Source: RMDB library M2RFPK, as collected in RNAgym. Structure probing data (DMS and 2A3) for a 207-nucleotide construct.
RNA sequence: GGGAACGACUCGAGUAGAGUCGAAAAGAAUUGGUAUGUAAGCUACUUCCUCCAGUAGCUGCGUCAUAACAUCAAGGUUAUGCAUACUGAGCCGAAGCUCAGCUUCGGUCCUCCAAGGAAGACCAAAUACAGCUCAGCCCGUUCGCGGGCUGAGCAACACUAGUAAUUUGUUCGCAAAUUACUAGUGAAAAGAAACAACAACAACAAC
Reactivity to DMS in 0.01 (KOAc 150mM, MgCl2 10mM, bicine 150mM(pH8.5), 24C), signal-to-noise 2, nucleotides 027 to 156: g000a100a110u020u010g020g020u010a030u000g010u000a300a300g000c010u000a020c000u000u000c030c030u010c020c050a260g000u000a030g000c000u010g040c030g010u010c000a020u000a000a020c010a300u000c240a200a200g000g000u000u000a010u000g000c020a040u000a010c000u000g010a090g020c000c010g010a000a030g030c010u020c170a080g020c010u000u000c020g020g000u000c040c010u000c130c050a040a060g000g000a120a050g010a210c060c060a060a080a120u010a060c110a150g020c010u010c000a030g050c000c000c000g150u000u000c210g040c030g000g000g010c010u000g000a000g030c000a020a050
Reactivity to 2A3 in 0.01 (KOAc 150mM, MgCl2 10mM, bicine 150mM(pH8.5), 24C), signal-to-noise 5, nucleotides 027 to 156: g070a020a080u030u020g000g000u000a000u000g010u010a010a010g020c000u000a010c000u130u100c010c010u000c010c010a000g000u000a000g010c010u000g000c000g000u010c000a000u000a010a010c010a070u250c230a140a040g250g000u000u000a000u000g000c010a010u000a010c020u010g010a000g010c010c000g000a000a000g000c030u060c300a030g000c000u030u000c000g000g010u000c010c010u060c050c040a060a040g030g000a050a050g030a050c040c080a040a080a040u200a090c090a040g000c000u000c000a000g000c000c000c000g040u060u070c150g010c030g110g000g000c000u000g000a000g000c000a000a000